The record gives the reactivity of an RNA of 207 nucleotides to DMS and 2A3. The 2A3 profile rests on 13,541 reads. The RNA was probed in 150 mM KOAc, 10 mM MgCl2 and 150 mM bicine (pH 8.5) at 24 C.
[RMDB]
RNA sequence: GGGAACGACUCGAGUAGAGUCGAAAAGGGGUCGUUACAAUGACGGACCUAGAGCUUUGAUCUAUGGCUGAAGCCUCCACGGCCAUAGGGAGCUCUGGGUCUAAGACAGUAACGACGGAGGCACCCAAACAUGAAUCGUCUUCGGACGAUUCAUGAAGAUUUGGUAUAUGUUCGCAUAUACCAAAUCAAAAGAAACAACAACAACAAC
Reactivity to DMS in 0.01 (KOAc 150mM, MgCl2 10mM, bicine 150mM(pH8.5), 24C), signal-to-noise 2, nucleotides 027 to 156: g030g030g030g000u000c010g020u000u000a030c010a190a140u000g010a080c120g010g000a020c000c000u000a030g000a030g020c000u000u000u000g000a060u000c010u010a020u000g010g000c010u000g000a040a130g000c010c010u000c020c020a300c040g020g000c000c010a030u010a030g010g000g020a030g020c020u000c010u010g010g000g000u010c000u000a010a070g000a150c040a260g010u000a000a020c010g010a020c030g020g050a020g130g040c000a120c000c020c000a110a120a260c010a020u010g010a010a010u000c000g010u020c000u010u010c300g030g000a020c000g000a010u000u000c000a010u010g000a100a160
Reactivity to 2A3 in 0.01 (KOAc 150mM, MgCl2 10mM, bicine 150mM(pH8.5), 24C), signal-to-noise 7, nucleotides 027 to 156: g070g020g030g000u000c000g000u000u010a010c080a290a300u250g080a060c030g000g000a000c000c010u000a000g000a000g000c020u300u300u040g010a010u000c000u000a000u000g010g000c010u020g020a110a010g010c000c000u000c000c000a010c000g000g010c000c010a000u000a000g000g000g000a010g000c000u000c000u000g000g000g000u000c000u000a000a010g010a030c020a020g000u000a010a000c000g000a000c020g000g000a000g000g000c000a020c000c000c010a040a090a040c010a010u000g000a000a000u010c000g020u000c020u050u080c260g090g010a000c000g010a000u000u000c000a000u000g000a020a030